This 177-nucleotide RNA was probed chemically with DMS and 2A3. The 2A3 profile rests on 13,725 reads. 2A3 adducts were read by reverse transcription with SuperScript II with manganese. Conditions: 150 mM KOAc, 10 mM MgCl2 and 150 mM bicine (pH 8.5), 24 C. For DMS, 4,798 sequencing reads were counted.
RNA sequence: GGGAACGACUCGAGUAGAGUCGAAAAGAUAUGGACGCAAUACUCGCGAUAAGCGGAUACUCGGAAACGAGUAAUCGCUUUUGACGCGAGUUGCGUCCUAAGUCAAACCAUGCCUUCGGGCAUGGAAGCCCUACAAAUAGUUCGCUAUUUGUAGGGCAAAAGAAACAACAACAACAAC
Reactivity to DMS in 0.01 (KOAc 150mM, MgCl2 10mM, bicine 150mM(pH8.5), 24C), signal-to-noise 3, nucleotides 027 to 126: g000a030u000a290u010g000g010a030c010g030c010a020a070u020a080c040u000c000g020c000g010a200u020a020a010g020c000g010g020a060u000a010c000u000c000g010g010a060a070a140c000g010a020g010u010a000a040u000c000g010c000u000u000u010u010g030a220c080g010c010g000a020g020u000u000g000c010g020u000c000c000u000a000a080g000u000c030a150a190a210c000c000a020u000g000c010c000u000u040c230g000g000g000c010a000u000g010g000a050a140
Reactivity to 2A3 in 0.01 (KOAc 150mM, MgCl2 10mM, bicine 150mM(pH8.5), 24C), signal-to-noise 3, nucleotides 027 to 126: g020a020u050a020u110g000g000a000c010g000c010a010a040u070a300c020u010c010g030c030g140a150u090a300a010g010c010g000g030a010u010a010c000u000c010g030g000a050a050a010c010g010a000g000u010a000a020u020c010g020c010u050u060u060u200g230a130c120g000c000g000a000g000u000u000g000c010g000u000c000c000u000a010a010g020u000c000a030a020a060c000c000a010u010g010c000c010u100u110c300g120g000g000c000a000u000g000g000a000a040